[RMDB]
RNA sequence: GGGAACGACUCGAGUAGAGUCGAAAAAGCCUGUACGCAGGCACGUGUUGAGGUAGCCGCCCGCCACAGUCACAGUCUCACACCCUUUGACUGGCGAUUGUCCAGUGGUGGCUAAGAUCAAUGUCAACGGUUUGCAAAUUUUCGAAUUUGCAAACCGAAAAGAAACAACAACAACAAC
Reactivity to DMS in 0.01 (KOAc 150mM, MgCl2 10mM, bicine 150mM(pH8.5), 24C), signal-to-noise 2, nucleotides 027 to 126: a110g020c020c060u020g000u020a090c280g010c030a000g040g030c000a080c170g000u050g040u000u010g010a000g000g000u010a040g000c000c010g010c000c000c000g000c220c160a030c040a010g030u020c000a100c000a060g000u000c010u000c100a120c150a190c200c220c110u030u010u000g000a010c010u040g050g020c300g000a000u000u000g000u000c180c140a230g000u040g080g020u000g000g000c000u010a000a010g050a130u030c000a010a010u050g000u020c120a120a280
Reactivity to 2A3 in 0.01 (KOAc 150mM, MgCl2 10mM, bicine 150mM(pH8.5), 24C), signal-to-noise 2, nucleotides 027 to 126: a000g040c040c000u070g010u030a030c260g000c070a000g020g050c010a010c110g160u200g000u020u010g000a060g090g090u020a010g010c000c000g000c000c000c030g130c050c020a000c000a030g000u000c030a000c000a000g000u000c000u010c100a160c010a110c130c070c000u080u090u110g010a010c000u000g000g040c120g000a000u000u010g020u060c020c010a100g030u020g130g000u000g000g020c000u000a010a000g000a020u040c010a040a040u070g120u160c060a050a000